The data come from the RNA Mapping Database (RMDB), library TTRINS. This 177-nucleotide RNA was probed chemically with DMS and 2A3. Values cover nucleotides 27 to 126. The reactions ran in a buffer of 150 mM KOAc, 10 mM MgCl2 and 150 mM bicine (pH 8.5), at 24 C. For 2A3 the reverse transcriptase was SuperScript II with manganese.

RNA sequence: GGGAACGACUCGAGUAGAGUCGAAAAAGAUAUGGAUGAGGUAGAGGGAGGCAUGAACAAACUAUUAUAUCGGAAACGAUAUAACGAAUUUGUACCAUGCCGAAGAACUCUACCUCAUCCUAAGUCAUCUAAUAUCAGUCUUCGGACUGAUAUUAGAAAAAGAAACAACAACAACAAC
Reactivity to DMS in 0.01 (KOAc 150mM, MgCl2 10mM, bicine 150mM(pH8.5), 24C), signal-to-noise 4, nucleotides 027 to 126: a100g010a020u000a260u000g000g010a030u010g020a010g010g010u010a000g000a020g000g020g030a110g020g010c000a020u000g010a130a010c000a020a000a020c090u000a300u010u000a000u000a010u000c000g000g020a080a070a140c000g010a020u000a010u010a010a000c070g010a020a070u000u000u000g010u000a120c170c010a000u000g010c000c010g020a060a100g010a100a120c000u000c010u000a000c000c000u010c000a000u000c000c000u000a010a040g000u000c030a190
Reactivity to 2A3 in 0.01 (KOAc 150mM, MgCl2 10mM, bicine 150mM(pH8.5), 24C), signal-to-noise 2, nucleotides 027 to 126: a010g040a010u050a050u090g000g010a000u000g000a000g000g020u020a010g010a020g010g070g020a110g010g060c000a000u000g010a030a000c000a030a000a010c070u020a020u060u010a010u020a000u020c000g030g000a040a030a030c010g000a010u010a000u010a010a000c030g090a300a300u000u010u000g010u020a090c110c000a000u010g000c000c000g000a030a000g000a000a000c000u010c000u010a000c010c000u000c000a000u000c000c010u000a000a000g000u000c000a020